Structure probing data (2A3 and DMS) for a 177-nucleotide construct.
For 2A3, 12,767 sequencing reads were counted.
Conditions: 150 mM KOAc, 10 mM MgCl2 and 150 mM bicine (pH 8.5), 24 C.
For 2A3 the reverse transcriptase was SuperScript II with manganese.
For DMS, 5,872 sequencing reads were counted.
Reactivities are given for positions 27 through 126.
[RMDB]
RNA sequence: GGGAACGACUCGAGUAGAGUCGAAAAGAUAUGGAAAUGUGACAUGCCUGACCUCGGAAACGAGGUCCAGGCAACAGCACACUUCCUAAGUCAAAGAGAUGUUGACCGUUCGCGGUCAACAUCUCAACAUUCAGUAUCACUUCGGUGAUACUGAAUGAAAAGAAACAACAACAACAAC
Reactivity to 2A3 in 0.01 (KOAc 150mM, MgCl2 10mM, bicine 150mM(pH8.5), 24C), signal-to-noise 3, nucleotides 027 to 126: g010a010u060a040u100g000g000a000a020a020u040g020u000g040a130c070a120u190g010c010c000u000g000a000c010c000u000c000g010g010a070a040a020c000g000a010g020g000u010c030c010a010g000g000c010a000a000c010a000g010c000a000c000a000c020u000u010c000c000u020a090a010g060u030c070a110a150a060g010a000g010a000u000g000u010u010g000a010c020c000g000u040u110c300g000c020g130g000u000c000a000a000c000a000u000c000u010c010a000a000
Reactivity to DMS in 0.01 (KOAc 150mM, MgCl2 10mM, bicine 150mM(pH8.5), 24C), signal-to-noise 4, nucleotides 027 to 126: g000a030u000a280u000g000g000a000a010a020u000g020u000g000a050c070a210u000g010c000c000u010g000a030c000c000u000c000g010g000a060a060a140c000g000a010g010g020u000c080c050a010g010g000c000a010a020c230a150g000c000a010c000a010c050u000u000c000c000u000a050a140g010u010c050a090a090a130g000a020g000a000u000g000u000u000g000a010c010c010g020u000u010c240g020c020g010g000u010c000a000a000c010a000u000c000u000c000a020a120